[RMDB]
RNA sequence: GGGAACGACUCGAGUAGAGUCGAAAAAGGCAGCCGGCGCGGCGAGUUCGACCGGACGGGUCUCGUCGUGCUGCGCGGCGACCGCGUCCACCGCCACCGGCGCCAGCGGAACGUCGUAGAUGGCGCAGUCAUGGACUGGGUUCGCCCAGUCCAUGACAAAAGAAACAACAACAACAAC
Reactivity to 2A3 in 0.01 (KOAc 150mM, MgCl2 10mM, bicine 150mM(pH8.5), 24C), signal-to-noise 1, nucleotides 027 to 126: a000g090g000c020a030g010c070c000g010g030c110g020c030g040g000c030g000a050g070u140u200c100g060a100c150c070g010g080a030c040g090g000g000u030c050u010c060g000u000c000g020u030g040c110u050g000c030g000c000g020g040c010g000a000c000c000g130c000g130u000c000c070a060c080c000g020c030c000a030c000c000g000g000c010g000c000c000a030g060c040g060g010a080a040c010g030u030c020g010u090a080g050a290u180g010g060c050g010c030a030
Reactivity to DMS in 0.01 (KOAc 150mM, MgCl2 10mM, bicine 150mM(pH8.5), 24C), signal-to-noise 2, nucleotides 027 to 126: a080g010g000c000a110g020c000c030g010g010c300g060c080g000g010c030g030a070g000u010u000c060g000a060c190c120g010g010a030c030g030g000g010u000c020u000c060g010u000c020g000u000g010c060u020g020c050g030c000g000g000c040g020a070c060c000g000c050g000u000c010c030a150c090c020g030c030c030a140c030c020g020g010c020g000c000c000a120g050c070g000g000a110a100c070g010u000c020g000u010a100g010a100u000g000g010c020g020c050a130